[RMDB]
RNA sequence: GGGAACGACUCGAGUAGAGUCGAAAAGAGUAUCAGUACUGAAAUGCUCAGGAAAGACGGCUUCUCAUUAUGGUGCAGGUAGGGAAAACCUGGGGUCUGAGCCGUACGGUCACCAGGACCACAGACUGUUUUUCUCACUAGUUCAGAAGGCCAGAUAUGAUACUCGUAGUUUCGACUACGAGUAUCAAAAAGAAACAACAACAACAAC
Reactivity to DMS in 0.01 (KOAc 150mM, MgCl2 10mM, bicine 150mM(pH8.5), 24C), signal-to-noise 3, nucleotides 027 to 156: g000a100g030u000a040u000c030a100g020u000a180c050u010g010a110a100a060u000g010c030u000c030a100g000g000a130a080a140g020a150c020g020g000c010u000u000c030u000c030a100u000u030a100u000g010g030u000g030c060a110g020g010u000a070g010g000g000a050a020a020a040c030c020u000g010g010g000g010u010c010u000g000a300g030c010c040g030u000a050c080g040g020u000c010a050c060c030a080g010g000a060c020c010a010c010a010g000a100c120u000g010u010u000u000u000u010c010u000c000a090c040u000a060g000u000u000c050a090g000a120a120g000g010c030c000a090g010a100u010a140
Reactivity to 2A3 in 0.01 (KOAc 150mM, MgCl2 10mM, bicine 150mM(pH8.5), 24C), signal-to-noise 3, nucleotides 027 to 156: g030a000g000u070a050u140c090a020g050u130a100c020u070g050a020a070a110u100g040c010u020c030a010g020g090a080a090a010g060a010c030g000g020c010u070u000c020u010c050a070u050u220a100u180g040g000u070g020c110a030g100g030u080a050g040g000g000a010a010a010a010c000c000u000g030g000g000g000u010c000u000g020a020g000c000c010g080u140a090c130g010g000u020c010a060c070c020a040g060g070a020c010c000a020c000a010g040a030c050u050g030u080u020u000u000u020c010u000c010a030c050u050a020g050u100u040c030a040g000a110a020g070g020c020c010a000g020a080u160a070